An RNA of 177 nucleotides, treated with DMS and 2A3 and read out base by base. For 2A3 the reverse transcriptase was SuperScript II with manganese. The reactions ran in a buffer of 150 mM KOAc, 10 mM MgCl2 and 150 mM bicine (pH 8.5), at 24 C.

RNA sequence: GGGAACGACUCGAGUAGAGUCGAAAAGAGUCUGCGGCUCAAUCUGACUCAACGCGCGCACCUCACCAGGCCCGGACGCGCGGAGGACCGACAGCCGGGCGCGCUUUCGCGAUCGCGCGGGCGGUGGCAUUCCAGGAGGAUUCGUCCUCCUGGAAUGAAAAGAAACAACAACAACAAC
Reactivity to DMS in 0.01 (KOAc 150mM, MgCl2 10mM, bicine 150mM(pH8.5), 24C), signal-to-noise 6, nucleotides 027 to 126: g010a080g030u020c010u010g010c090g010g020c030u010c070a070a110u020c070u000g000a060c020u010c050a140a100c060g000c030g010c020g020c080a110c050c010u010c060a060c080c080a080g010g000c040c020c030g000g010a120c050g010c040g010c030g010g000a100g020g000a110c040c020g000a100c110a140g010c040c020g000g000g010c020g000c100g010c080u000u010u010c070g000c040g020a080u010c070g010c040g000c020g010g000g010c020g000g000u010g010g000
Reactivity to 2A3 in 0.01 (KOAc 150mM, MgCl2 10mM, bicine 150mM(pH8.5), 24C), signal-to-noise 9, nucleotides 027 to 126: g040a010g030u040c040u090g030c020g070g000c020u020c050a060a140u060c050u070g050a050c010u010c060a030a070c020g020c000g000c000g000c020a080c020c000u050c010a050c020c030a040g110g000c000c010c020g030g030a050c020g020c000g000c010g030g010a060g030g040a090c020c020g070a060c030a020g040c030c000g010g040g010c030g000c010g010c000u030u100u090c040g020c030g100a140u070c040g000c010g000c000g040g010g010c010g020g030u030g010g010
It was measured as part of the RMDB libraries RFM100 and RFMREP.